The record gives the reactivity of an RNA of 177 nucleotides to DMS and 2A3. The RNA was probed in 150 mM KOAc, 10 mM MgCl2 and 150 mM bicine (pH 8.5) at 24 C. For 2A3 the reverse transcriptase was SuperScript II with manganese. For 2A3, 2,297 sequencing reads were counted.
RNA sequence: GGGAACGACUCGAGUAGAGUCGAAAAGCCUUGUCGAUGUACCGUGAAUUGGUGGCUAACCGUGGCGUGAUCGUCAUCCCCACCAGGGACGGCGAGCAGGAUCGGCUGAAUUUCAAGUGCAAUCAGACAUACUCACCGCUUUCGAGCGGUGAGUAUGAAAAGAAACAACAACAACAAC
Reactivity to DMS in 0.01 (KOAc 150mM, MgCl2 10mM, bicine 150mM(pH8.5), 24C), signal-to-noise 3, nucleotides 027 to 126: g020c030c010u010u000g000u010c030g020a090u020g010u010a060c020c100g000u000g010a080a090u000u000g020g010u020g010g000c070u010a080a110c140c100g010u000g000g010c090g010u020g030a070u010c010g020u000c000a060u000c050c070c000c020a140c300c200a120g000g000g040a000c070g010g000c030g000a040g000c050a050g020g010a100u010c110g010g010c070u000g000a060a060u000u020u010c050a150a110g020u000g000c040a090a090u020c100a130g030a240
Reactivity to 2A3 in 0.01 (KOAc 150mM, MgCl2 10mM, bicine 150mM(pH8.5), 24C), signal-to-noise 3, nucleotides 027 to 126: g030c000c020u040u020g020u030c060g040a090u040g050u090a060c020c010g020u050g100a150a020u080u060g060g020u040g110g000c040u070a140a010c040c040g170u050g050g000c080g060u070g070a110u080c020g000u030c000a030u040c030c000c020c000a100c030c070a060g000g030g000a000c000g000g000c020g000a030g010c040a050g010g090a090u080c030g000g000c020u030g050a060a120u080u090u080c060a070a020g040u020g110c000a020a130u070c020a010g040a000